[RMDB]
RNA sequence: GGGAACGACUCGAGUAGAGUCGAAAAACCAGCCUACCGGGUCAGACGAACGCAGAGUUGCAAAAUACCAGCAACAAGGUAGGCUGAACCAGCAUUACCUGUUGCAGGGAGAGGUAAGGCGAAGAAACAUGGCCCUGAGUUUCGACUCAGGGCCAUGAAAAGAAACAACAACAACAAC
Reactivity to DMS in 0.01 (KOAc 150mM, MgCl2 10mM, bicine 150mM(pH8.5), 24C), signal-to-noise 1, nucleotides 027 to 126: a160c250c000a050g000c000c010u030a080c030c050g040g010g000u000c070a110g030a130c130g000a060a110c030g000c110a110g090a190g090u030u000g090c020a080a100a030a030u040a080c040c020a270g000c000a000a000c000a100a110g010g050u000a000g010g010c000u000g020a010a150c120c070a030g050c020a090u000u000a000c040c060u070g000u000u000g000c030a210g060g000g000a080g000a070g000g010u000a030a040g010g000c010g010a070a090g030a060a030a100